[RMDB]
RNA sequence: GGGAACGACUCGAGUAGAGUCGAAAACUACUUCAGAGCUGGGGGCUAGCAGUCGACCUAGGAAAUGUCCAUUCACUCAGUUGGGCAGUUGGCCAAUUGGUCAACAAAGAUGGGUGAGACCCUAAUAUGUGAUAUGCCAUGAGGAAAUAAAAAUGAACAUCUAACUCUGGUUCGCCAGAGUUAGAUGAAAAGAAACAACAACAACAAC
Reactivity to 2A3 in 0.01 (KOAc 150mM, MgCl2 10mM, bicine 150mM(pH8.5), 24C), signal-to-noise 2, nucleotides 027 to 156: c020u070a010c010u050u070c030a090g030a050g050c060u020g000g000g010g000g040c030u060a050g020c000a000g010u050c020g000a110c000c020u030a050g000g100a060a120a020u090g000u000c020c000a030u030u090c000a040c050u050c000a050g050u060u040g000g000g000c040a040g000u010u020g020g020c000c000a060a300u110u300g010g010u020c000a000a000c000a010a060a010g090a040u070g020g020g000u030g010a050g040a010c000c000c020u040a090a030u040a070u070g050u000g050a070u040a030u160g030c010c020a030u040g020a020g050g130a000a110a000u260a020a030a060a050a020u180g030a010a040
Reactivity to DMS in 0.01 (KOAc 150mM, MgCl2 10mM, bicine 150mM(pH8.5), 24C), signal-to-noise 1, nucleotides 027 to 156: c020u000a110c000u020u000c020a130g020a120g020c040u000g000g030g010g040g020c050u000a130g050c020a060g010u000c020g010a090c030c000u000a110g000g020a040a100a120u000g020u000c020c040a190u010u000c040a110c050u000c010a120g020u020u010g000g020g000c070a120g060u000u000g010g010c000c000a190a260u000u030g040g050u000c000a000a000c010a100a040a070g020a110u010g000g000g040u000g000a120g010a070c030c000c010u030a020a150u020a070u000g000u030g000a070u000a040u000g010c020c030a070u000g010a130g010g010a020a050a240u000a040a060a100a130a080u000g000a060a300
The record gives the reactivity of an RNA of 207 nucleotides to 2A3 and DMS.
For DMS the reverse transcriptase was MarathonRT.
The reactions ran in a buffer of 150 mM KOAc, 10 mM MgCl2 and 150 mM bicine (pH 8.5), at 24 C.
Values are in units of 0.01, from 0 to 300, in steps of 10.
The DMS profile rests on 2,211 reads.